RNA sequence: GGGAACGACUCGAGUAGAGUCGAAAAACGAGUCCGUACGCGGACUCGAAGGGCCCCAGAAGACCAAGGGGCCCAAACCUACCACUCAUUAGAUGCAUGGAAAUCACUAGGUGAUACAUCACCUAGAACACGCUUUUAAGCUUCGGCUUAAAAGCAAUCACAAUUCAUAGUUCGCUAUGAAUUGUGAAAAAGAAACAACAACAACAAC
Reactivity to DMS in 0.01 (KOAc 150mM, MgCl2 10mM, bicine 150mM(pH8.5), 24C), signal-to-noise 1, nucleotides 027 to 156: a030c000g030a070g070u000c000c000g030u000a080c230g040c020g000g030a060c000u000c000g000a040a010g020g030g040c010c000c000c010a200g000a150a150g020a210c080c030a100a110g020g030g080g070c000c020c000a000a010a030c010c010u000a070c040c010a110c000u000c060a140u000u010a130g000a070u000g000c040a130u000g000g000a050a070a050u000c040a110c000u000a000g000g000u030g020a180u010a160c150a130u000c010a000c000c000u000a000g010a060a050c100a130c110g020c000u020u000u000u000a000a020g010c000u000u000c300g020g000c000u000u000a000a010a010a000g000c020a040a020
Reactivity to 2A3 in 0.01 (KOAc 150mM, MgCl2 10mM, bicine 150mM(pH8.5), 24C), signal-to-noise 4, nucleotides 027 to 156: a000c000g000a000g010u000c010c010g000u050a040c240g000c000g110g020a000c000u010c000g000a000a000g000g000g000c000c000c000c000a120g100a300a030g080a140c050c070a100a080g010g000g000g020c000c000c010a010a000a000c000c000u020a020c010c010a060c030u110c020a060u080u150a070g060a150u110g060c060a060u090g090g100a070a120a110u120c060a050c060u000a000g010g000u000g000a040u070a280c060a150u070c000a010c010c000u000a000g000a010a020c050a020c080g010c000u020u000u000u000a000a000g000c020u010u130c260g110g000c000u000u020a000a000a000a000g000c000a000a000